[RMDB]
The record gives the reactivity of an RNA of 207 nucleotides to 2A3 and DMS. The 2A3 profile rests on 3,684 reads.
RNA sequence: GGGAACGACUCGAGUAGAGUCGAAAAGAAGUCGCUCUCUCUCGCCCUUCACAACCUUCUCGGCAUUGAGAUGACCAUAGGCCAGAAGUGAGUCUUUAAGUAGACACAGCUGAUCUAAGGCGUUGUGUAGGGGCACGGGUUUUCAACCCCCAUGACGGUGAUUUAUAUUCUUCGGAAUAUAAAUCACAAAAGAAACAACAACAACAAC
Reactivity to 2A3 in 0.01 (KOAc 150mM, MgCl2 10mM, bicine 150mM(pH8.5), 24C), signal-to-noise 5, nucleotides 027 to 156: g110a040a020g050u030c010g000c020u000c000u000c000u010c020u050c130g000c000c000c000u000u000c010a010c000a000a010c010c010u030u020c010u060c090g030g030c040a060u070u150g060a070g050a160u120g100a090c020c050a110u120a090g080g020c000c010a000g000a010a010g030u010g010a010g010u000c000u050u280u060a300a300g260u110a060g040a000c010a000c010a020g010c000u040g030a120u060c010u060a070a050g030g000c010g000u010u010g000u010g040u100a030g000g010g000g000c010a010c010g000g000g030u020u050u120u110c030a040a080c010c000c020c020c020a040u100g070a060c140g110
Reactivity to DMS in 0.01 (KOAc 150mM, MgCl2 10mM, bicine 150mM(pH8.5), 24C), signal-to-noise 1, nucleotides 027 to 156: g000a090a040g010u000c010g070c020u010c000u000c010u000c080u010c000g000c000c000c020u000u020c010a060c020a010a020c000c160u000u000c000u010c090g040g090c110a110u000u000g000a110g040a100u000g020a110c060c030a260u000a070g050g020c000c000a030g000a070a030g030u000g000a290g030u000c000u010u000u000a130a220g070u000a020g030a060c000a110c040a160g000c000u000g000a100u010c130u010a060a260g010g020c030g010u000u000g020u000g020u000a060g020g020g040g010c010a040c100g010g030g000u000u000u000u000c070a210a150c030c030c010c030c070a050u000g020a110c250g010